[RMDB]
RNA sequence: GGGAACGACUCGAGUAGAGUCGAAAAUAAGCAAUCUGCUUAAGGCUUCCAAACUUACCUUAAUUUGGUAAGAAAAUAAGCUGCCCUAUUUUUCUUUCUUCUUCUCUUACAACUGGAACCAGGCAUUGUCCUCAUACCGAUUCGUCGGUAUGAGGACAAAAGAAACAACAACAACAAC
Reactivity to 2A3 in 0.01 (KOAc 150mM, MgCl2 10mM, bicine 150mM(pH8.5), 24C), signal-to-noise 1, nucleotides 027 to 126: u030a000a000g040c010a000a160u170c110u300g010c000u010u010a030a040g020g010c010u030u000c040c000a080a050a040c000u000u010a000c010c000u060u140a180a090u260u150u080g020g030u030a000a000g010a010a150a000a050u060a010a000g000c040u080g000c000c000c040u010a050u000u040u010u000u000c010u010u010u030c000u000u020c000u060u000c020u020c010u030u060a000c010a040a060c020u030g060g000a060a020c050c000a020g060g000c070a060u000u020